Conditions: 150 mM KOAc, 10 mM MgCl2 and 150 mM bicine (pH 8.5), 24 C. Chemical mapping of a 207-nucleotide RNA with DMS and 2A3. The DMS profile rests on 1,914 reads. The data come from the RNA Mapping Database (RMDB), library OK3TST. For 2A3, 858 sequencing reads were counted.

[RMDB]
RNA sequence: GGGAACGACUCGAGUAGAGUCGAAAAUUGAUGCCGAUAAGGCCUACCAUUUCGAGAAAAACCUUUUACAGGUCACAACAGCCAUUGCUAGUAAUUUUGUUGCUAACACGCCUAAGAAGGAGAUUAUGCCUAAGACUCAAGCUAAAGAAUCAAAAGCCAACAGGUACUACUUCGGUAGUACCUGUUGAAAAGAAACAACAACAACAAC
Reactivity to DMS in 0.01 (KOAc 150mM, MgCl2 10mM, bicine 150mM(pH8.5), 24C), signal-to-noise 2, nucleotides 027 to 156: u010u000g010a100u020g000c040c000g000a240u030a140a180g000g000c020c020u000a100c070c030a250u000u020u010c060g000a210g010a060a150a020a100a090c010c030u010u000u010u000a150c180a070g070g010u000c080a140c050a120a130c070a090g010c030c010a160u000u020g000c020u000a050g010u000a050a070u000u000u000u000g010u000u000g000c020u010a070a070c070a090c110g020c010c000u020a040a090g000a070a140g000g000a080g050a090u000u000a060u000g050c020c010u000a090a140g010a030c020u000c030a000a090g030c030u000a000a040a180g000a050a070u000c060a050a090a080a250g010c040
Reactivity to 2A3 in 0.01 (KOAc 150mM, MgCl2 10mM, bicine 150mM(pH8.5), 24C), signal-to-noise 2, nucleotides 027 to 156: u000u060g020a030u110g070c050c000g040a070u040a260a050g050g000c020c000u020a020c020c000a070u080u030u090c080g050a030g100a090a110a000a020a040c060c000u100u050u020u100a150c150a060g000g040u100c080a030c020a140a090c010a010g000c020c020a100u110u080g000c000u030a020g030u050a020a060u000u090u070u200g000u020u060g020c020u020a020a020c040a040c060g010c020c020u040a010a030g010a030a040g090g010a040g010a010u060u030a050u180g030c010c000u030a060a040g020a040c010u010c050a010a010g010c010u070a200a090a000g040a070a010u050c050a070a070a000a000g060c000